The record gives the reactivity of an RNA of 207 nucleotides to 2A3 and DMS. DMS (dimethyl sulfate) methylates the pairing face of unpaired adenines and cytosines. DMS adducts were read by reverse transcription with MarathonRT.

RNA sequence: GGGAACGACUCGAGUAGAGUCGAAAACGUACGUGUUUUCACGUACGACGAGACUUUUGUCUCGGAUUGAGCCAUCAUACAGGGCUCCCAUGCGAGGCGAUUGUCCUUAUUGUUCGGAUUGUCGCUUCUUCUCGUAUGGUACAACAGACUGUAUGUAGAUGGGAUAUACGUUCGCGUAUAUCCCAUCAAAAGAAACAACAACAACAAC
Reactivity to 2A3 in 0.01 (KOAc 150mM, MgCl2 10mM, bicine 150mM(pH8.5), 24C), signal-to-noise 5, nucleotides 027 to 156: c010g000u000a010c000g010u020g040u040u080u140u300c020a010c000g000u000a000c000g010a000c000g000a000g000a010c030u180u220u300u300g010u010c000u010c010g000g040a070u080u130g020a000g000c010c000a000u020c000a000u010a000c000a000g000g000g000c000u040c070c010c000a020u010g000c000g000a000g000g000c000g000a000u000u050g000u020c000c000u170u230a250u200u300g140u160u220c080g000g000a010u010u050g010u010c000g000c000u100u080c000u090u030c000u010c010g010u010a000u000g010g030u070a050c060a090a000c010a020g180a080c000u010g000u000a000u010g020u030a030
Reactivity to DMS in 0.01 (KOAc 150mM, MgCl2 10mM, bicine 150mM(pH8.5), 24C), signal-to-noise 3, nucleotides 027 to 156: c010g030u000a000c010g030u000g010u010u010u020u000c010a020c000g020u000a000c000g020a050c020g000a060g000a020c000u000u010u000u020g010u000c020u000c000g030g010a130u000u010g000a100g010c010c020a150u010c010a030u000a050c030a040g000g010g010c000u000c110c020c010a050u000g010c030g010a080g020g060c020g000a030u000u010g020u000c000c010u000u010a130u000u010g010u010u000c200g000g000a040u000u000g030u000c000g000c030u000u000c070u000u010c050u000c010g040u000a010u000g010g020u010a120c080a080a160c110a140g030a190c030u000g020u000a000u000g010u000a230